[RMDB]
RNA sequence: GGGAACGACUCGAGUAGAGUCGAAAAUUGCGUGUCACCUGCCUUUUCUUGAGAUGUGUUGGGAUGGCUUCCAGUUUAUCGUAAGUGGGAAUCAGCCGCCCAGGGAUGGGGCCAGGCCCAGGAAUUAGCACAGCUCCUUUUCAUAUUCCUGCCCUGACCACCAUAUCGAGUUCGCUCGAUAUGGUGGAAAAGAAACAACAACAACAAC
Reactivity to 2A3 in 0.01 (KOAc 150mM, MgCl2 10mM, bicine 150mM(pH8.5), 24C), signal-to-noise 2, nucleotides 027 to 156: u060u070g060c010g000u060g040u150c030a030c050c020u010g040c000c000u000u140u050u060c030u120u040g000a080g010a070u040g030u030g070u220u030g020g030g040a060u000g000g000c000u180u150c000c000a060g070u000u080u240a180u050c060g000u100a090a040g060u040g050g010g010a020a130u070c000a040g030c000c030g000c000c000c000a000g030g060g010a020u040g000g000g050g020c030c050a040g030g070c010c000c000a000g020g050a090a060u170u080a020g020c030a020c000a080g000c020u050c030c040u140u140u080u090c080a060u090a050u140u080c020c000u060g020c000c000c000u010g040a020